[RMDB]
RNA sequence: GGGAACGACUCGAGUAGAGUCGAAAAUGUCUGAACAAGACUUUGUUGCAAAGUAUGGCAAAGACCUUGGUCUCGAACAUAUACUUUAUGGUGAAGUGGACAAACCGCAAUUGGGUGGUUUACACACGGGUUGAAGCGUAUUCGUACGCUUCAACCCAAAAGAAACAACAACAACAAC
Reactivity to DMS in 0.01 (KOAc 150mM, MgCl2 10mM, bicine 150mM(pH8.5), 24C), signal-to-noise 1, nucleotides 027 to 126: u020g010u040c000u000g000a090a040c140a140a030g010a090c000u010u000u000g000u000u000g020c070a090a160a110g000u000a040u000g010g010c050a070a090a010g000a020c010c010u000u010g000g050u000c040u000c030g010a120a250c040a080u000a040u000a060c010u030u000u000a110u000g030g020u010g030a110a040g020u010g010g020a080c130a030a040a020c050c010g060c030a120a100u000u030g010g030g020u000g010g000u000u000u010a070c120a050c020a090c090
Chemical mapping of a 177-nucleotide RNA with DMS. The DMS profile rests on 688 reads.